[RMDB]
RNA sequence: GGGAACGACUCGAGUAGAGUCGAAAACUUCUUCCAUAGUCACUAUUAUAAAACUUCGGGUCUUAUUCUCAUAUGCCCCCGCAAGCGAGGGCCUGGUCGAUUAGUGAGACCAGGUGCGACGCGGGGGACAUACAUAUGAGUUCGCUCAUAUGUAUGUAAAAGAAACAACAACAACAAC
Reactivity to 2A3 in 0.01 (KOAc 150mM, MgCl2 10mM, bicine 150mM(pH8.5), 24C), signal-to-noise 9, nucleotides 027 to 126: c020u070u040c010u110u040c030c020a100u090a060g070u080c030a020c100u060a060u300u080a130u160a130a110a070a040c030u090u050c020g030g000g000u000c010u050u120a070u090u010c030u010c030a040u120a070u270g030c000c000c000c000c000g000c020a080a120g090c020g050a060g030g120g000c000c000u000g000g010u000c010g070a120u080u150a150g110u100g140a060g000a020c000c000a000g000g000u020g020c010g010a020c040g000c000g000g000g000g000g000
Reactivity to DMS in 0.01 (KOAc 150mM, MgCl2 10mM, bicine 150mM(pH8.5), 24C), signal-to-noise 9, nucleotides 027 to 126: c100u010u010c050u010u010c030c030a080u010a070g010u010c040a050c060u010a050u010u020a110u020a100a090a110a070c060u010u010c020g000g010g010u010c020u000u010a140u000u000c010u000c020a120u030a090u010g020c010c000c000c000c000g010c010a130a210g010c060g020a080g030g010g000c000c000u000g000g000u000c000g010a190u020u020a100g020u020g010a230g000a010c000c000a010g010g020u000g000c010g000a120c180g010c000g010g000g000g000g000
Structure probing data (2A3 and DMS) for a 177-nucleotide construct. It was measured as part of the RMDB libraries RFM100 and RFMREP. DMS (dimethyl sulfate) methylates the pairing face of unpaired adenines and cytosines. Reactivities are given for positions 27 through 126. The RNA was probed in 150 mM KOAc, 10 mM MgCl2 and 150 mM bicine (pH 8.5) at 24 C. For DMS the reverse transcriptase was MarathonRT.